[RMDB]
RNA sequence: GGGAACGACUCGAGUAGAGUCGAAAACGAGGAGACCAGCCUCCAAUGGGACCCAGAAGCCCCCCGUGUCCCUGAGAAAGGGAAGAGGAGGAGGCAACCAGCGACCUCAGGCCGCCGCAGACCCCAAGAGAGCAAGAACAUUCGUGUUCUUGCUCUCAAAAGAAACAACAACAACAAC
Reactivity to DMS in 0.01 (KOAc 150mM, MgCl2 10mM, bicine 150mM(pH8.5), 24C), signal-to-noise 1, nucleotides 027 to 126: c080g020a110g010g000a060g010a070c040c120a140g010c100c050u000c000c120a050a200u000g010g000g000a040c060c000c030a180g060a100a250g020c050c000c000c010c020c040g000u020g000u040c030c000c000u000g000a120g000a130a170a040g010g030g000a020a120g020a140g050g000a160g000g000a040g050g000c100a040a100c070c080a170g000c040g000a100c020c030u000c070a120g040g030c020c000g040c010c050g000c080a180g050a180c020c000c000c010a160a100